[RMDB]
RNA sequence: GGGAACGACUCGAGUAGAGUCGAAAAACGUGUGGCGGUUGUCGGGGCGGCUCGAUGGGCAGGCGUUCACGAUAGGCCGAUCUCCGUCCACAGACGAUCGACGCGCGCCUUCACGGCGGCGUCCAUACUCAUCCAUAUGCUUCGGCAUAUGGAUGAGAAAAGAAACAACAACAACAAC
Reactivity to DMS in 0.01 (KOAc 150mM, MgCl2 10mM, bicine 150mM(pH8.5), 24C), signal-to-noise 3, nucleotides 027 to 126: a100c060g010u000g020u010g000g010c090g020g000u000u000g010u000c000g010g010g000g020c030g010g030c130u010c190g010a090u000g010g000g000c020a120g020g000c050g020u010u020c120a080c080g020a120u010a150g010g010c010c010g010a050u000c040u000c010c020g020u000c000c010a070c060a120g010a050c060g000a050u000c090g010a040c030g000c010g020c000g030c010c000u000u010c230a110c250g000g000c020g010g000c010g010u000c000c100a070u010a110
Reactivity to 2A3 in 0.01 (KOAc 150mM, MgCl2 10mM, bicine 150mM(pH8.5), 24C), signal-to-noise 2, nucleotides 027 to 126: a010c050g030u030g030u050g060g030c020g050g010u020u040g030u050c040g000g000g040g120c040g000g050c030u010c080g090a150u080g030g000g010c060a040g080g180c090g080u100u130c080a030c080g060a050u060a130g110g000c020c000g000a020u000c010u000c010c000g020u040c000c000a070c020a030g040a010c030g030a040u140c060g010a010c010g020c010g020c000g000c040c000u180u270c170a070c110g000g000c000g020g030c030g040u000c030c000a030u100a090